An RNA of 170 nucleotides, treated with DMS and 2A3 and read out base by base. Conditions: 150 mM KOAc, 10 mM MgCl2 and 150 mM bicine (pH 8.5), 24 C. The DMS profile rests on 13,704 reads. It was measured as part of the RMDB library 15KLIB. Reactivities are given for positions 27 through 129.

RNA sequence: GGGAACGACUCGAGUAGAGUCGAAAAUCCGAGUGGACGUCUGUCCUCCUUCGGAUGCCCAGGUCGGACCGCGGGGAGGUGGAGAUGCCAUGCCGACCCGAAGAGGAAAGGAAGGACACAGACGCGAGAAUCGUCCGGUUCGCCGGACGAAAAAGAAACAACAACAACAAC
Reactivity to DMS in 0.01 (KOAc 150mM, MgCl2 10mM, bicine 150mM(pH8.5), 24C), signal-to-noise 5, nucleotides 027 to 129: u020c030c020g010a070g020u030g010g020a070c040g080u100c000u100g040u000c030c040u020c070c090u000u000c030g000g000a060u020g030c020c000c020a090g000g020u020c000g030g020a170c040c080g000c070g060g000g020g010a040g000g030u010g010g010a090g020a160u040g050c110c060a090u000g050c080c010g010a130c030c020c060g010a100a070g030a000g020g050a000a000a000g030g020a010a000g060g020a020c240a060c150a080g010a000c070g020c050g040a100g000a120a060
Reactivity to 2A3 in 0.01 (KOAc 150mM, MgCl2 10mM, bicine 150mM(pH8.5), 24C), signal-to-noise 5, nucleotides 027 to 129: u050c020c000g010a020g030u050g010g000a010c020g080u120c210u290g020u000c040c030u040c040c070u070u050c000g000g030a010u030g010c010c000c000a020g050g010u060c050g020g000a040c010c030g020c040g030g040g030g000a010g000g030u080g030g010a120g000a070u160g060c060c060a070u100g000c000c000g020a010c000c000c000g010a040a010g030a010g050g010a010a030a000g050g010a020a020g030g020a010c020a000c020a070g090a020c040g030c050g030a040g010a060a060